Description:
An RNA of 177 nucleotides, treated with DMS and read out base by base. The DMS profile rests on 931 reads. For DMS the reverse transcriptase was MarathonRT. The reactions ran in a buffer of 150 mM KOAc, 10 mM MgCl2 and 150 mM bicine (pH 8.5), at 24 C.
RNA sequence: GGGAACGACUCGAGUAGAGUCGAAAAGAUAUGGAUGGAGAAUCCCUGGUCGACACUCGGAAACGAGUGAGAACGACCCUGGAUUCGUUGAAAUCCUAAGUCAAAGGUGACGGUUCGCCGUCACCAACGAACAAACUCUCUUCGGAGAGUUUGUUCGAAAAGAAACAACAACAACAAC
Reactivity to DMS in 0.01 (KOAc 150mM, MgCl2 10mM, bicine 150mM(pH8.5), 24C), signal-to-noise 1, nucleotides 027 to 126: g000a010u010a300u000g000g000a000u000g020g000a170g000a000a030u010c000c010c030u000g000g000u000c000g040a200c000a000c000u010c000g000g020a070a070a300c000g000a050g000u000g010a130g010a120a140c010g010a000c000c000c030u000g000g010a010u010u000c000g000u000u000g030a100a100a040u000c000c000u000a110a140g010u000c020a030a060a230g000g020u000g020a010c000g010g000u010u010c200g060c020c000g000u010c000a000c000c020a010a050